[RMDB]
RNA sequence: GGGAACGACUCGAGUAGAGUCGAAAAGGGUCGUGACUGGCGAACAGGUGGGAAACCACCGGGGAGCGACCCUUGCCGCCCGCCUGGGCAAAAAAGGUCGUAUAGAACCUUCGGGUUCUAUACGACCGUAAUGUAUGUUGUUCGCAACAUACAUUACAAAAGAAACAACAACAACAAC
Reactivity to DMS in 0.01 (KOAc 150mM, MgCl2 10mM, bicine 150mM(pH8.5), 24C), signal-to-noise 5, nucleotides 027 to 126: g010g000g010u000c000g010u000g000a300c020u000g020g020c010g010a030a030c040a090g010g020u000g000g000g000a160a100a210c000c000a010c000c000g000g000g000g010a300g000c000g010a020c000c000c000u000u000g000c050c120g010c010c000c010g020c150c110u000g030g010g030c030a000a020a060a060a070a110g000g000u000c000g000u000a010u000a020g000a020a010c000c000u000u010c210g020g000g000u000u000c000u000a000u000a000c000g000a000c000c010
Reactivity to 2A3 in 0.01 (KOAc 150mM, MgCl2 10mM, bicine 150mM(pH8.5), 24C), signal-to-noise 2, nucleotides 027 to 126: g000g000g010u000c000g020u020g020a060c010u020g080g040c040g030a060a010c030a060g020g000u010g000g010g000a070a060a080c000c000a000c000c010g010g000g000g000a010g010c000g010a000c010c000c010u000u030g020c010c020g010c000c010c010g080c100c150u280g010g010g000c000a100a040a000a030a030a000g010g000u000c000g000u000a000u000a000g000a000a000c000c010u010u030c150g060g010g000u010u000c000u000a010u000a000c000g000a000c000c000
Chemical mapping of a 177-nucleotide RNA with DMS and 2A3. The RNA was probed in 150 mM KOAc, 10 mM MgCl2 and 150 mM bicine (pH 8.5) at 24 C. It was measured as part of the RMDB library RFMREP. For DMS the reverse transcriptase was MarathonRT. Reactivities are given for positions 27 through 126.